Structure probing data (2A3 and DMS) for a 207-nucleotide construct. 2A3 adducts were read by reverse transcription with SuperScript II with manganese. Reactivities are given for positions 27 through 156. For 2A3, 2,695 sequencing reads were counted. Conditions: 150 mM KOAc, 10 mM MgCl2 and 150 mM bicine (pH 8.5), 24 C.
[RMDB]
RNA sequence: GGGAACGACUCGAGUAGAGUCGAAAAGUAACUUUCAGACCUGGGCUUUGCUCACUUCCUGCUGCCCAUCUAAGAAGGGACCUGGGUAUCUCUUGGAACUGGCAAAGAGAGUCAGGUUCAUUGCGUUUAUCUCCUUUGCUGAUAUUUGGGAAUGGGAACUAUUUCCGUAGUUCGCUACGGAAAUAGUAAAAGAAACAACAACAACAAC
Reactivity to 2A3 in 0.01 (KOAc 150mM, MgCl2 10mM, bicine 150mM(pH8.5), 24C), signal-to-noise 4, nucleotides 027 to 156: g020u040a070a070c070u070u140u100c060a070g020a080c020c050u040g020g020g020c040u120u090u120g020c030u080c060a040c030u070u020c010c020u050g040c030u040g000c010c010c010a030u030c050u100a090a150g040a050a080g070g010g000a020c030c070u020g020g010g050u080a150u020c040u000c010u050u030g030g000a080a080c040u060g100g000c020a060a060a000g030a000g010a010g050u030c000a000g000g000u010u000c010a020u010u100g020c020g040u060u070u090a100u020c060u040c010c000u100u080u110g030c040u050g070a130u050a170u190u140u130g050g000g020a070a080u070g020g020g040a040
Reactivity to DMS in 0.01 (KOAc 150mM, MgCl2 10mM, bicine 150mM(pH8.5), 24C), signal-to-noise 2, nucleotides 027 to 156: g010u010a040a070c060u000u000u000c050a150g020a100c060c030u000g010g030g000c030u000u010u000g010c000u010c050a040c050u010u000c020c020u000g030c090u010g000c020c010c010a090u020c060u000a110a130g010a130a110g030g010g000a010c010c010u010g010g040g020u000a070u000c010u000c030u010u010g010g020a090a160c040u000g000g040c030a060a040a070g000a100g010a100g030u000c010a020g000g010u000u000c050a110u000u000g010c030g000u000u010u010a100u010c020u000c010c050u000u010u010g030c000u010g020a090u000a070u000u010u010g030g000g000a090a060u000g000g020g020a110